Chemical mapping of a 207-nucleotide RNA with DMS and 2A3. For DMS the reverse transcriptase was MarathonRT. The RNA was probed in 150 mM KOAc, 10 mM MgCl2 and 150 mM bicine (pH 8.5) at 24 C. High DMS reactivity at an A or C suggests that its Watson-Crick edge is free. 2A3 adducts were read by reverse transcription with SuperScript II with manganese.
RNA sequence: GGGAACGACUCGAGUAGAGUCGAAAAAUCACCGGUGGGGAACCCCAUACGGCAACGGCGUCGAAGUAAAUGCUAACCAAUCCGUGGUAUCUACGCGACGGAGCAUCCACGGAUAACUCUAACAAGGCUAAGCGUCUCGGUUUCGACCGAGACGCAACUUAUCGAUUAGAUUCGUCUAAUCGAUAAGAAAAGAAACAACAACAACAAC
Reactivity to DMS in 0.01 (KOAc 150mM, MgCl2 10mM, bicine 150mM(pH8.5), 24C), signal-to-noise 1, nucleotides 027 to 156: a050u000c050a030c090c000g060g010u000g000g010g020g050a140a110c060c010c040c020a120u000a120c010g000g000c040a040a040c080g090g000c030g020u010c030g000a090a040g040u000a090a120a070u000g040c010u020a100a190c050c010a180a170u000c030c010g010u010g020g040u000a050u000c010u010a040c030g000c100g030a210c140g010g010a180g060c060a170u000c010c010a020c000g010g020a040u000a010a030c050u000c070u010a040a090c060a110a090g010g010c030u020a110a140g020c000g000u000c000u040c000g040g000u000u000u000c270g000a010c060c090g000a000g010a000c000g050c010a000a010
Reactivity to 2A3 in 0.01 (KOAc 150mM, MgCl2 10mM, bicine 150mM(pH8.5), 24C), signal-to-noise 3, nucleotides 027 to 156: a000u080c010a010c010c000g010g020u020g000g030g030g070a080a090c060c030c000c000a020u100a140c010g000g000c060a090a050c050g030g020c010g020u050c040g040a070a030g020u110a040a170a100u120g030c050u060a080a070c020c010a040a030u000c000c000g000u010g000g000u090a100u040c060u070a070c060g040c050g110a080c080g100g000a020g010c010a040u020c000c000a000c000g000g020a000u010a010a000c030u040c020u100a050a050c070a100a020g110g000c030u150a110a060g000c000g000u000c000u020c000g000g020u030u040u130c200g040a030c000c020g000a000g000a000c000g010c000a000a000